[RMDB]
RNA sequence: GGGAACGACUCGAGUAGAGUCGAAAACCCCGCACCUUCGGGUGCGGGGAACUACCGAGAAUGCGACUCGGUAUAUACGCAAAACCCUUGGAAACAAGGCAAUUCACGAACAGUUCGCUGUUCGUAAGUCAUAUUACACGUUCGCGUGUAAUAUGACAAAAGAAACAACAACAACAAC
Reactivity to DMS in 0.01 (KOAc 150mM, MgCl2 10mM, bicine 150mM(pH8.5), 24C), signal-to-noise 2, nucleotides 027 to 126: c000c000c000c020g030c000a010c000c010u010u010c240g040g020g050u020g010c000g020g010g020g000a010a030c140u000a070c000c000g000a030g020a080a110u000g020c160g030a130c010u000c010g010g000u010a000u010a070u000a070c180g020c150a060a050a090a100c270c000c000u020u010g020g000a110a110a190c000a000a000g000g020c240a070a030u020u010c120a020c000g010a020a010c000a020g000u000u000c200g060c000u000g000u000u000c000g010u000a030a120
Reactivity to 2A3 in 0.01 (KOAc 150mM, MgCl2 10mM, bicine 150mM(pH8.5), 24C), signal-to-noise 2, nucleotides 027 to 126: c000c010c000c000g060c020a020c010c020u040u130c260g170g020g000u000g020c040g010g030g000g000a010a010c020u010a020c010c010g010a020g050a110a110u200g100c060g180a100c030u020c010g000g010u000a000u000a000u000a010c040g000c030a040a040a050a110c020c010c000u000u000g020g010a010a040a040c010a010a010g010g000c000a040a160u110u140c080a010c010g000a000a000c010a020g020u060u070c130g020c110u010g000u020u000c000g020u020a000a060
The record gives the reactivity of an RNA of 177 nucleotides to DMS and 2A3. For DMS the reverse transcriptase was MarathonRT. The reactions ran in a buffer of 150 mM KOAc, 10 mM MgCl2 and 150 mM bicine (pH 8.5), at 24 C. Values cover nucleotides 27 to 126.